RNA sequence: GGGAACGACUCGAGUAGAGUCGAAAAGAUAUGGACUUAAGUAGCGAUGAGAUGUCGGUCGGAAACGACCGCAUCGAGCUAUAAGUCCUAAGUCAAACCUUGGACGCAGUUCGCUGCGUCCAAGGAACUCGUGUCACGUGUUCGCACGUGACACGAGAAAAGAAACAACAACAACAAC
Reactivity to 2A3 in 0.01 (KOAc 150mM, MgCl2 10mM, bicine 150mM(pH8.5), 24C), signal-to-noise 1, nucleotides 027 to 126: g030a000u000a010u020g000g030a000c020u120u040a110a230g130u080a270g070c030g300a300u280g080a210g000a030u010g150u300c100g000g000u000c000g000g000a000a000a000c000g000a020c020c010g000c000a020u030c020g000a000g000c010u020a010u050a260a000g010u000c000c020u000a000a000g010u010c070a190a030a120c010c000u000u000g030g000a000c020g050c010a010g000u040u130c200g160c300u010g070c050g000u100c000c000a000a030g000g010a000a000